RNA sequence: GGGAACGACUCGAGUAGAGUCGAAAAGUCAACCAGCUCUUUGGUGCGCGUUUGCAUGCGCUCUUUGGCAGAUAAAAAGAGGUCAUUCUGCAUUGUCGCGAGGGUUUGUUCGACGUAAGAGAGCAACAAGUAUCGUCCAGUUCGCUGGACGAUACUUAAAAGAAACAACAACAACAAC
Reactivity to 2A3 in 0.01 (KOAc 150mM, MgCl2 10mM, bicine 150mM(pH8.5), 24C), signal-to-noise 1, nucleotides 027 to 126: g000u020c010a020a020c000c010a000g020c000u000c020u010u140u140g130g040u120g000c030g020c020g040u060u140u140g080c010a030u060g010c060g010c000u000c000u060u030u030g050g000c080a040g000a070u130a060a180a000a010a010g060a000g030g040u100c020a080u020u100c020u020g060c020a030u030u090g120u180c020g000c010g040a000g040g050g000u030u030u010g020u000u060c050g000a000c010g010u020a010a030g090a020g020a020g060c020a020a000c020
Reactivity to DMS in 0.01 (KOAc 150mM, MgCl2 10mM, bicine 150mM(pH8.5), 24C), signal-to-noise 2, nucleotides 027 to 126: g010u000c050a110a100c050c010a060g020c030u020c020u010u000u000g010g000u000g020c030g030c060g000u010u000u000g020c080a050u000g010c070g020c000u000c010u010u000u020g020g000c110a050g020a120u010a040a050a090a070a040g010a060g000g000u000c080a100u000u000c050u010g010c050a110u010u010g020u010c080g030c070g000a060g000g000g010u000u000u010g020u000u010c120g010a080c040g010u000a110a070g010a040g000a040g010c050a080a060c190